[RMDB]
RNA sequence: GGGAACGACUCGAGUAGAGUCGAAAAGGUGCUAUAUUGCGCCGUCAGUAUAAUUUGUCCACCUCUCCACUAACAUCUACCAUUGCCACCGGGACUAAUCUUGUGCUAUAUGCUGCCCCACUCAGCCCACUUCCAUUGGGUUCGCCCAAUGGAAGUGAAAAGAAACAACAACAACAAC
Reactivity to 2A3 in 0.01 (KOAc 150mM, MgCl2 10mM, bicine 150mM(pH8.5), 24C), signal-to-noise 3, nucleotides 027 to 126: g000g020u030g020c060u050a040u050a130u300u250g010c040g000c020c000g030u040c030a010g090u040a050u040a210a120u080u110u150g040u030c010c020a000c030c010u000c000u000c050c010a060c050u030a070a030c010a070u040c010u050a080c020c040a060u020u120g000c000c010a000c000c000g040g000g040a050c010u060a080a030u050c040u070u080g030u030g000c050u030a020u020a040u300g010c020u000g000c010c000c000c000a020c000u050c020a000g030c000c000
Reactivity to DMS in 0.01 (KOAc 150mM, MgCl2 10mM, bicine 150mM(pH8.5), 24C), signal-to-noise 2, nucleotides 027 to 126: g020g030u010g000c030u000a070u010a070u000u010g030c030g040c030c030g000u020c050a050g000u000a040u000a050a110u000u000u000g000u000c060c010a050c050c030u010c070u010c020c040a050c110u000a070a040c090a080u000c050u010a070c070c040a070u000u020g000c050c050a100c050c070g000g010g000a040c070u000a060a080u000c060u000u000g010u000g020c020u000a090u000a100u000g010c040u000g000c060c020c020c030a070c100u000c100a060g000c090c100